The record gives the reactivity of an RNA of 207 nucleotides to 2A3.
It was measured as part of the RMDB library M2RFPK.

RNA sequence: GGGAACGACUCGAGUAGAGUCGAAAAACGAGUCCGUACGCGGACUCGAAGGGCCCCAGAAGACCAAGGGGCCCAAACCUACCACUCUUUAGAUGCAUGGAAAUCACUAGGUGAUACGUCACCUAGAACACGCUUUUAAGCUUCGGCUUAAAAGCAACUCAUGUAAAUUCUUCGGAAUUUACAUGAGAAAAGAAACAACAACAACAAC
Reactivity to 2A3 in 0.01 (KOAc 150mM, MgCl2 10mM, bicine 150mM(pH8.5), 24C), signal-to-noise 2, nucleotides 027 to 156: a000c000g010a000g010u000c030c020g020u030a050c220g000c020g040g010a000c000u030c000g000a010a010g020g000g000c000c000c000c000a140g090a300a050g080a170c080c030a140a050g040g000g000g010c000c000c020a010a000a000c010c000u030a030c000c050a050c040u160c040u040u110u170a050g020a100u070g070c090a060u100g090g160a060a120a050u170c050a080c050u000a010g010g020u000g000a040u010a090c180g070u000c000a000c000c000u000a000g000a000a010c040a010c100g000c000u000u000u000u000a000a000g000c010u010u120c230g060g000c000u000u000a000a000a000a000g010c000a000a000

The RNA was probed in 150 mM KOAc, 10 mM MgCl2 and 150 mM bicine (pH 8.5) at 24 C. Values are in units of 0.01, from 0 to 300, in steps of 10. 2A3 adducts were read by reverse transcription with SuperScript II with manganese.